[RMDB]
The data come from the RNA Mapping Database (RMDB), library OK3TST. Chemical mapping of a 207-nucleotide RNA with 2A3. Values cover nucleotides 27 to 156. As a SHAPE reagent, 2A3 marks flexible, mostly unpaired nucleotides at the ribose 2'-OH. For 2A3, 541 sequencing reads were counted.
RNA sequence: GGGAACGACUCGAGUAGAGUCGAAAAGCCGGCUGGGCACUGUGGCUCAGGCCUGUAAUCCCCACACUUUGGGAGGUUGAGGUGGGCAGAUUGCUUGAGCCCAGAUGUUUGAGACCACCCUGGGAAUAUGGUGAAACCCCAUCUCUACAAAAAAUAACAGCAUUAUGGAUUUCGAUCCAUAAUGCUGAAAAGAAACAACAACAACAAC
Reactivity to 2A3 in 0.01 (KOAc 150mM, MgCl2 10mM, bicine 150mM(pH8.5), 24C), signal-to-noise 1, nucleotides 027 to 156: g010c020c000g010g010c050u020g000g020g020c030a040c130u230g060u130g020g020c020u060c000a000g030g130c010c010u070g070u090a110a140u030c000c030c000c000a030c010a010c010u110u050u070g020g000g000a110g040g010u050u000g010a000g010g000u040g010g000g040c050a000g000a080u100u090g010c000u040u050g000a020g000c000c000c000a000g010a010u070g010u000u070u090g080a030g020a000c050c000a010c020c070c000u010g010g000g040a170a000u120a030u160g000g030u030g000a030a040a070c000c020c020c020a040u070c000u010c000u110a080c080a000a010a030a060a000a120u300a080a070